[RMDB]
RNA sequence: GGGAACGACUCGAGUAGAGUCGAAAAGUGUGGGCUCAGGAAGGGAAGGAAUGUGACCAAGGCUGGGUGUGGCUGGGGAGAGCACAGCCAGUUGUGGGUUUUUCUUGGGGCCCAGAUAGAUGUGAGCAGUAGUCCUUGUCUUCGGACAAGGACUACUAAAAGAAACAACAACAACAAC
Reactivity to 2A3 in 0.01 (KOAc 150mM, MgCl2 10mM, bicine 150mM(pH8.5), 24C), signal-to-noise 3, nucleotides 027 to 126: g090u120g020u020g060g000g000c000u010c020a010g120g060a030a040g020g030g120a030a060g050g130a120a080u180g090u160g120a030c000c000a070a030g000g000c000u000g010g030g120u010g000u000g100g040c050u050g010g000g030g010a130g000a000g060c000a000c000a030g120c000c010a010g000u020u040g080u140g080g050g010u040u050u000u020u020c010u000u040g020g000g050g010c000c000c000a010g020a010u090a010g080a040u080g090u090g030a020g020c100